Chemical mapping of a 177-nucleotide RNA with DMS and 2A3. High 2A3 reactivity points to a flexible backbone, as in loops and unpaired stretches. The 2A3 profile rests on 31,517 reads. The reactions ran in a buffer of 150 mM KOAc, 10 mM MgCl2 and 150 mM bicine (pH 8.5), at 24 C.

[RMDB]
RNA sequence: GGGAACGACUCGAGUAGAGUCGAAAAUGCGAUAAUACGCCGCGCGUAUAUAGCGUAUCGCCGCUAUCGCUAUAUAGCGGCGAUAAUACGCCGCAUAUAUGCGAUACGCCGCUAUAUAAUAUAUCGCCAAUGGCGAUAUAUUCGUAUAUCGCCAUUGAAAAGAAACAACAACAACAAC
Reactivity to DMS in 0.01 (KOAc 150mM, MgCl2 10mM, bicine 150mM(pH8.5), 24C), signal-to-noise 9, nucleotides 027 to 126: u000g010c000g010a010u000a050a080u000a070c100g020c110c100g020c150g010c070g030u000a020u000a030u000a060g010c010g000u000a070u000c100g020c070c070g020c100u000a010u000c110g020c100u000a030u000a030u000a090g020c000g000g010c000g010a020u000a040a090u010a210c010g010c010c010g010c030a050u000a040u000a030u010g020c000g010a040u000a020c050g020c080c030g000c020u000a030u000a040u010a070a080u000a110u000a030u000c010g010c020
Reactivity to 2A3 in 0.01 (KOAc 150mM, MgCl2 10mM, bicine 150mM(pH8.5), 24C), signal-to-noise 4, nucleotides 027 to 126: u070g010c000g000a010u030a110a060u080a150c080g040c110c060g120c030g000c020g070u010a020u000a000u020a030g020c010g010u040a100u150c040g040c060c000g010c040u010a000u010c020g040c150u030a040u010a000u010a180g000c000g000g000c000g000a000u000a000a010u030a010c000g000c010c000g020c030a000u020a000u010a010u120g000c000g000a000u000a020c040g020c010c010g000c010u000a010u010a000u010a110a070u080a010u020a010u090c010g000c020